RNA sequence: GGGAACGACUCGAGUAGAGUCGAAAAAUGCCAGUCGAGCGCGUCGAAGAGAUAAAAUCCAAUUUGUUGAGUGAAGUGUUCCAAAAAGGUUCCAGUCCUUACUGGGAGGGUUAUACGGGUCAAUAUGCUCUGCAUCGUUGUUCGCAACGAUGCAGAGAAAAGAAACAACAACAACAAC
Reactivity to DMS in 0.01 (KOAc 150mM, MgCl2 10mM, bicine 150mM(pH8.5), 24C), signal-to-noise 1, nucleotides 027 to 126: a100u000g020c050c010a100g010u010c060g010a070g010c040g030c080g030u010c040g060a080a130g000a070g000a050u000a060a060a040a120u010c070c060a070a150u020u030u010g020u010u000g010a120g000u000g000a090a100g000u010g000u000u000c020c030a030a090a050a050a070g030g000u020u000c020c060a050g000u000c060c060u010u000a030c120u000g000g000g020a130g000g010g000u000u000a040u000a070c110g000g030g000u000c020a080a080u000a100u020g010

Conditions: 150 mM KOAc, 10 mM MgCl2 and 150 mM bicine (pH 8.5), 24 C.
Chemical mapping of a 177-nucleotide RNA with DMS.
It was measured as part of the RMDB library OK2TRN.